[RMDB]
RNA sequence: GGGAACGACUCGAGUAGAGUCGAAAAAGAUGAACAAGAUCAAGACCCCCUUAGCUGCUUGUGUAUCAGAAACUAGAAAGGCCUGAUCUAUCAUUGGAAUGUGACAUACCUCUGAUACUCAACAUUCCCAAAUCCUAUCAUUCGUGAUAGGAUUUGGAAAAGAAACAACAACAACAAC
Reactivity to DMS in 0.01 (KOAc 150mM, MgCl2 10mM, bicine 150mM(pH8.5), 24C), signal-to-noise 3, nucleotides 027 to 126: a120g020a090u010g000a110a130c140a080a010g010a040u010c000a100a070g020a170c020c010c010c010c040u000u000a050g020c250u000g000c110u000u000g000u000g000u000a010u000c020a060g000a050a050a100c080u000a060g020a040a090a050g010g020c010c010u000g000a020u010c050u000a080u000c030a050u020u000g000g010a060a030u000g010u000g000a030c140a070u000a130c080c050u000c020u000g010a010u000a040c050u000c060a040a060c110a110u000u000c040
Reactivity to 2A3 in 0.01 (KOAc 150mM, MgCl2 10mM, bicine 150mM(pH8.5), 24C), signal-to-noise 2, nucleotides 027 to 126: a020g040a040u050g000a080a070c050a090a040g030a090u020c030a040a250g190a300c000c010c020c030c070u030u140a030g000c050u090g000c000u060u030g000u010g020u000a010u010c000a010g010a060a070a020c060u120a050g060a100a080a000g100g000c000c060u030g020a060u020c020u000a030u030c010a060u020u080g090g080a160a050u080g020u070g030a030c030a090u170a040c010c010u000c030u040g010a000u010a010c000u030c000a000a000c010a050u080u050c000